[RMDB]
RNA sequence: GGGAACGACUCGAGUAGAGUCGAAAAUGUAUUUGGGGGUACGUGGGGAAAAUUGGGGAAAUAUAGAUUUUACUCAAAUCUCUUUUUUUAGGGGCCUCCAAAACCCCCAAAACCGUGUAGCCCCUAACGAUCGGACGAAAUUCGUUUUGUUUGAUCGAAAAGAAACAACAACAACAAC
Reactivity to 2A3 in 0.01 (KOAc 150mM, MgCl2 10mM, bicine 150mM(pH8.5), 24C), signal-to-noise 2, nucleotides 027 to 126: u100g020u050a180u020u010u040g000g000g000g000g000u040a000c010g030u090g000g000g020g020a080a050a000a030u010u010g010g000g020g030a000a020a000u170a000u050a050g080a080u010u040u000u090a100c020u000c010a010a050a110u010c010u010c010u070u190u090u060u070u030u040a020g010g000g030g060c000c000u010c000c020a000a030a010a040c000c000c000c000c020a000a010a000a010c000c000g000u020g010u030a020g050c000c000c000c000u010a040a000
Reactivity to DMS in 0.01 (KOAc 150mM, MgCl2 10mM, bicine 150mM(pH8.5), 24C), signal-to-noise 3, nucleotides 027 to 126: u030g020u000a090u010u000u010g020g020g000g010g000u000a080c160g020u020g010g020g000g000a060a040a070a120u020u000g000g000g000g000a040a020a020u020a210u010a060g000a040u020u010u010u000a060c030u020c010a010a020a030u010c010u000c000u000u000u000u010u020u020u020a030g010g010g010g020c150c040u000c020c030a030a030a120a080c050c000c000c010c030a000a010a020a060c120c060g010u020g010u010a130g000c030c000c000c040u000a040a120
The record gives the reactivity of an RNA of 177 nucleotides to 2A3 and DMS. Source: RMDB library OK1LIB, as collected in RNAgym. For DMS the reverse transcriptase was MarathonRT. 2A3 adducts were read by reverse transcription with SuperScript II with manganese.